This 177-nucleotide RNA was probed chemically with DMS and 2A3. Reactivities are given for positions 27 through 126. The DMS profile rests on 3,392 reads. 2A3 adducts were read by reverse transcription with SuperScript II with manganese.
RNA sequence: GGGAACGACUCGAGUAGAGUCGAAAAUUGCUUAUCCCUGGUUUCUGUAGUGUUAAGCGGAUGAGAGUCGCAGGUUAGCCCCCAGCAGACGCUGGUACUCAUUUUACCGACCUCGGGAGGAUGGAAAUAGCACCCUACUAUUCGUAGUAGGGUGCUAAAAAGAAACAACAACAACAAC
Reactivity to DMS in 0.01 (KOAc 150mM, MgCl2 10mM, bicine 150mM(pH8.5), 24C), signal-to-noise 2, nucleotides 027 to 126: u010u020g040c160u040u010a100u000c030c010c000u000g000g020u000u040u000c050u020g020u010a050g010u010g020u000u010a070a090g020c060g000g000a060u010g000a070g010a080g000u010c030g040c080a080g000g000u010u000a100g000c050c010c030c020c000a050g000c040a090g020a050c100g000c020u000g010g000u000a080c110u050c040a070u010u010u010u020a090c030c020g000a080c130c180u010c060g030g010g000a090g010g000a070u000g010g020a110a070a200
Reactivity to 2A3 in 0.01 (KOAc 150mM, MgCl2 10mM, bicine 150mM(pH8.5), 24C), signal-to-noise 2, nucleotides 027 to 126: u110u120g000c000u110u060a080u110c000c010c010u050g110g020u030u090u000c010u070g040u080a060g000u030g030u080u120a100a030g030c060g060g010a030u040g000a030g000a010g070u010c000g000c050a000g010g020u010u080a020g000c000c000c000c000c060a020g000c010a000g020a120c150g000c010u020g000g000u040a000c000u000c020a030u120u010u080u050a040c020c000g020a050c090c000u190c060g000g030g020a040g040g040a040u040g000g010a020a030a020